[RMDB]
RNA sequence: GGGAACGACUCGAGUAGAGUCGAAAAGAGUAAAUAGAGGAGUCAGGGUUCGCACCCGCUCCGCGAACCUAGGGUAACACUGACUCUGGAGCGUAAGAGAGAGCAGACGAAGAUACGUCUGCAUAGAAAUCAUGAGUAGUUUCGACUACUCAUGAUUAAAAGAAACAACAACAACAAC
Reactivity to 2A3 in 0.01 (KOAc 150mM, MgCl2 10mM, bicine 150mM(pH8.5), 24C), signal-to-noise 8, nucleotides 027 to 126: g080a010g060u220a050a080a150u230a090g120a040g090g030a020g010u050c070a060g000g000g030u020u040c020g000c010a090c020c050c000g000c010u010c010c000g000c000g000a010a010c000c050u080a060g040g060g070u120a140a030c070a030c130u060g020a000c000u000c030u030g010g010a040g030c050g050u150a170a020g080a020g010a020g010a020g080c000a000g000a000c010g020a130a040g100a190u150a130c010g000u000c000u000g000c000a000u000a010g040a000
Reactivity to DMS in 0.01 (KOAc 150mM, MgCl2 10mM, bicine 150mM(pH8.5), 24C), signal-to-noise 9, nucleotides 027 to 126: g010a060g010u030a060a060a080u030a090g010a190g010g000a020g000u010c030a060g000g010g000u000u000c030g020c030a120c070c050c030g010c030u010c030c200g000c010g000a010a010c010c020u010a120g000g000g010u020a080a070c140a300c070u010g000a030c010u000c010u010g010g010a100g010c070g000u020a080a090g010a130g010a120g000a120g010c000a010g000a020c000g000a180a140g020a150u030a080c000g000u000c000u000g010c000a020u020a060g010a090
About this RNA:
The record gives the reactivity of an RNA of 177 nucleotides to 2A3 and DMS. Values cover nucleotides 27 to 126. The data come from the RNA Mapping Database (RMDB), library OK1LIB. For 2A3, 12,200 sequencing reads were counted. DMS adducts were read by reverse transcription with MarathonRT. The RNA was probed in 150 mM KOAc, 10 mM MgCl2 and 150 mM bicine (pH 8.5) at 24 C. For DMS, 30,102 sequencing reads were counted.